[RMDB]
RNA sequence: GGGAACGACUCGAGUAGAGUCGAAAACGCUGCUUCCUCGAUUCGGAUCGGCUCAUCUCGACUAGAGGCGGCGGUCCUCAGUGCUCUUACUCUUUUCUGAUAAAGAGGAGACUGCUGGACUCGCCGCCCAAGUUCGAGAUGAGCCAACUGCCGAACGCUUAGUGGUUGUGUUCGCACAACCACUAAGAAAAGAAACAACAACAACAAC
Reactivity to 2A3 in 0.01 (KOAc 150mM, MgCl2 10mM, bicine 150mM(pH8.5), 24C), signal-to-noise 2, nucleotides 027 to 156: c070g050c090u170g030c010u090u030c000c020u060c060g300a300u000u000c010g000g020a030u010c150g010g030c000u000c010a000u000c000u000c000g010a010c010u030a040g000a160g250g000c000g030g000c000g000g000u000c000c000u000c010a060g030u200g220c010u000c010u100u170a200c000u060c010u040u120u100u040c180u210g130a180u220a290a000a010g000a000g010g000a000g000a000c000u000g030c050u020g000g000a020c050u020c250g000c000c000g000c000c000c000a000a000g000u060u060c000g000a000g000a000u000g000a000g010c020c000a000a000c000u010g010c000c000g010a000a000c000g020
The record gives the reactivity of an RNA of 207 nucleotides to 2A3. The reactions ran in a buffer of 150 mM KOAc, 10 mM MgCl2 and 150 mM bicine (pH 8.5), at 24 C.